Source: RMDB library OK1LIB, as collected in RNAgym. Structure probing data (DMS and 2A3) for a 177-nucleotide construct.
RNA sequence: GGGAACGACUCGAGUAGAGUCGAAAAAUAACGCACUGAAUGGUUCGUUGGUUAUGGGGGAGUGUGGUUCCCCAGGGAGUGGGUCGAGCGCCUCGGCCUCGGAAUCCGAGAGGAACAACGAGGUGGCCUGCAAGGGCUUAUUCGUAAGCCCUUGCAGAAAAGAAACAACAACAACAAC
Reactivity to DMS in 0.01 (KOAc 150mM, MgCl2 10mM, bicine 150mM(pH8.5), 24C), signal-to-noise 2, nucleotides 027 to 126: a100u010a040a040c050g020c030a040c020u010g010a130a100u030g020g000u010u010c050g000u010u010g020g010u030u010a050u010g000g010g000g000g020a060g000u050g000u030g000g010u000u010c010c010c000c020a050g000g000g010a130g050u010g020g000g000u030c030g040a030g010c100g000c000c030u000c070g010g000c000c010u000c060g030g010a110a090u000c030c060g010a140g010a190g010g000a070a060c140a120a130c000g000a020g000g000u010g010g000c070
Reactivity to 2A3 in 0.01 (KOAc 150mM, MgCl2 10mM, bicine 150mM(pH8.5), 24C), signal-to-noise 2, nucleotides 027 to 126: a000u160a000a020c020g000c010a010c030u130g120a070a140u150g130g010u000u000c040g020u030u070g000g020u200u080a160u180g060g000g010g000g000a060g000u150g070u050g030g210u050u080c000c010c000c010a000g060g060g000a080g100u140g000g030g000u050c020g010a020g040c010g020c000c040u010c010g040g020c020c000u020c020g000g040a090a030u070c020c030g010a010g030a040g090g030a040a080c060a070a040c100g000a010g010g000u060g010g060c000
The reactions ran in a buffer of 150 mM KOAc, 10 mM MgCl2 and 150 mM bicine (pH 8.5), at 24 C. For 2A3 the reverse transcriptase was SuperScript II with manganese. The 2A3 profile rests on 896 reads. For DMS the reverse transcriptase was MarathonRT.